The record gives the reactivity of an RNA of 177 nucleotides to DMS and 2A3.
For DMS, 3,998 sequencing reads were counted.

RNA sequence: GGGAACGACUCGAGUAGAGUCGAAAAGAUAUGGAGUAUGGACAUGACGGAUCGGUCGGAAACGACCGCGCACGUCAACAGCCCGCUACUCCUAAGUCAAACCGCUACUGGUUCGCCAGUAGCGGAAGUACUAACGUUGGUUCGCCAACGUUAGUACAAAAGAAACAACAACAACAAC
Reactivity to DMS in 0.01 (KOAc 150mM, MgCl2 10mM, bicine 150mM(pH8.5), 24C), signal-to-noise 4, nucleotides 027 to 126: g010a050u010a300u000g000g000a020g020u000a030u000g010g010a020c010a210u000g000a000c000g010g020a210u000c000g000g000u000c000g010g000a080a140a170c000g000a010c010c000g020c140g020c300a190c000g010u000c000a030a090c260a090g000c010c000c030g020c210u000a020c000u000c000c000u000a030a060g000u010c050a060a150a160c000c000g000c000u000a000c010u000g000g000u010u020c260g000c000c000a010g000u000a010g010c010g020g000a000a020
Reactivity to 2A3 in 0.01 (KOAc 150mM, MgCl2 10mM, bicine 150mM(pH8.5), 24C), signal-to-noise 2, nucleotides 027 to 126: g050a020u090a040u130g000g000a000g000u000a070u250g000g020a030c070a140u180g000a010c010g020g000a080u080c000g000g000u010c020g020g050a080a050a030c010g000a010c010c000g000c010g000c010a190c000g000u000c010a020a040c050a020g030c000c000c010g040c000u000a000c000u000c000c000u010a160a010g040u020c040a050a030a090c000c000g020c000u000a000c000u000g000g080u040u090c260g060c090c010a000g000u000a010g000c000g000g000a000a010